[RMDB]
RNA sequence: GGGAACGACUCGAGUAGAGUCGAAAAGAUAUGGACUCAGAUAUUGAGAUCGGAUGUAGCAACAGCAUGUUCAUCGGAAACGAUGACAUGACAUGCUACGCCGAUCUCAAUAUCUGAGUCCUAAGUCGAUGAUGAAAUCGUUCGCGAUUUCAUCAUCAAAAGAAACAACAACAACAAC
Reactivity to DMS in 0.01 (KOAc 150mM, MgCl2 10mM, bicine 150mM(pH8.5), 24C), signal-to-noise 2, nucleotides 027 to 126: g000a060u020a300u010g010g010a020c000u000c010a000g000a020u000a020u000u020g020a000g010a020u000c000g010g000a060u020g100u000a000g000c020a030a120c260a230g000c010a010u000g000u030u000c000a000u000c000g020g010a140a060a200c010g010a020u000g000a010c000a000u020g020a080c140a210u000g040c010u010a000c010g000c000c000g000a000u000c000u000c000a000a000u010a000u000c000u000g000a000g000u010c000c000u000a010a070g000u000c110
This 177-nucleotide RNA was probed chemically with DMS. DMS adducts were read by reverse transcription with MarathonRT. The reactions ran in a buffer of 150 mM KOAc, 10 mM MgCl2 and 150 mM bicine (pH 8.5), at 24 C.